[RMDB]
RNA sequence: GGGAACGACUCGAGUAGAGUCGAAAAGUUGUAAUGUAGUAUAAAUCAUACAAUUCUUGUAGUACAUCAUAUAUAGCACUGAAUUACCAAAUUCCUGAUAAAUAAGGAAAGGGUGGAAUAAAAGUAUACAUGAAACUAAGUUCGCUUAGUUUCAUGUAAAAGAAACAACAACAACAAC
Reactivity to DMS in 0.01 (KOAc 150mM, MgCl2 10mM, bicine 150mM(pH8.5), 24C), signal-to-noise 3, nucleotides 027 to 126: g020u010u000g020u010a080a080u010g020u000a170g000u000a050u010a070a110a080u010c040a150u010a040c060a040a090u010u000c060u000u020g000u000a070g010u000a050c020a100u010c050a050u010a050u010a100u000a120g030c040a030c090u000g000a120a070u000u000a070c040c040a060a070a140u000u000c010c000u000g000a150u020a050a090a120u010a120a060g010g000a010a020a060g010g020g010u010g020g000a060a070u010a060a070a080a090g000u010a120u000
Reactivity to 2A3 in 0.01 (KOAc 150mM, MgCl2 10mM, bicine 150mM(pH8.5), 24C), signal-to-noise 1, nucleotides 027 to 126: g010u020u020g050u030a090a160u090g000u020a050g100u050a100u040a140a200a070u070c000a020u030a100c020a020a060u040u000c000u100u030g060u010a010g040u000a000c020a030u000c040a000u160a040u030a010u050a300g020c030a020c070u010g000a110a000u040u000a040c000c000a010a070a130u040u010c000c020u000g020a050u060a190a170a020u110a130a030g010g030a000a000a000g070g010g040u050g000g160a080a000u050a040a210a000a010g030u010a010u000